[RMDB]
RNA sequence: GGGAACGACUCGAGUAGAGUCGAAAACCAUGAGCUGGUCGGCGACGGGGUCGUUACAUGCCUUGCCGGUAUUGCGGUGCGAAAUCCGGGUUGCCAGUUCCUGGAAACUGACAUAGAGGACGGAGUCCCCUCUGCUAAGAUUCGUCUUAGCAGAGGGAAAAGAAACAACAACAACAAC
Reactivity to DMS in 0.01 (KOAc 150mM, MgCl2 10mM, bicine 150mM(pH8.5), 24C), signal-to-noise 7, nucleotides 027 to 126: c010c000a090u010g010a070g020c030u000g010g000u000c090g020g000c020g000a090c050g010g000g000g020u000c040g020u000u000a060c080a080u000g010c020c040u000u010g010c090c100g000g010u000a050u000u000g020c070g010g010u000g000c030g000a050a070a090u010c010c010g000g000g010u000u000g010c000c010a040g010u000u000c020c060u000g000g000a070a060a080c070u000g010a050c050a080u000a110g010a100g010g010a090c050g000g010a150g000u000c070
Reactivity to 2A3 in 0.01 (KOAc 150mM, MgCl2 10mM, bicine 150mM(pH8.5), 24C), signal-to-noise 6, nucleotides 027 to 126: c000c000a030u050g030a010g030c030u020g010g030u190c080g020g020c020g060a120c020g020g010g010g030u030c010g010u020u120a040c030a060u080g020c000c010u050u120g130c050c030g040g010u040a090u040u160g070c080g070g050u080g010c030g030a050a050a060u050c000c010g030g020g000u030u050g010c000c000a030g010u010u020c000c020u030g020g000a070a070a040c040u060g030a010c010a050u140a070g070a030g070g050a030c040g050g020a020g070u030c000
Source information
Structure probing data (DMS and 2A3) for a 177-nucleotide construct. The reactions ran in a buffer of 150 mM KOAc, 10 mM MgCl2 and 150 mM bicine (pH 8.5), at 24 C. For DMS the reverse transcriptase was MarathonRT. The data come from the RNA Mapping Database (RMDB), library OK2TST. For 2A3 the reverse transcriptase was SuperScript II with manganese. For DMS, 14,638 sequencing reads were counted. The 2A3 profile rests on 11,136 reads. High 2A3 reactivity points to a flexible backbone, as in loops and unpaired stretches.